[RMDB]
RNA sequence: GGGAACGACUCGAGUAGAGUCGAAAAUCAAAGCAGCGAAGGGAUAGGCCAAGGACCAAAUAAAUAAGGCCAAACAGUCAAAUAAUAAAGACUGAGGUCCAAUAAGCCGAAGCUGCAUCCCAAAAAAUCCUCCAUUAAGAUUCGUCUUAAUGGAGGAAAAAGAAACAACAACAACAAC
Reactivity to DMS in 0.01 (KOAc 150mM, MgCl2 10mM, bicine 150mM(pH8.5), 24C), signal-to-noise 2, nucleotides 027 to 126: u020c130a190a120a130g060c000a000g020c000g000a100a300g040g000g000a110u000a110g010g000c010c040a220a120g020g000a000c000c000a010a080a110u010a030a070a080u010a100a110g000g060c010c040a070a060a210c000a000g020u000c020a050a140a090u010a110a080u020a010a180a090g030a030c020u000g000a080g010g010u000c000c000a060a090u030a150a100g010c010c000g010a110a260g000c000u000g000c010a070u000c000c000c000a010a010a040a080a120a040
Structure probing data (DMS) for a 177-nucleotide construct. For DMS the reverse transcriptase was MarathonRT. The RNA was probed in 150 mM KOAc, 10 mM MgCl2 and 150 mM bicine (pH 8.5) at 24 C.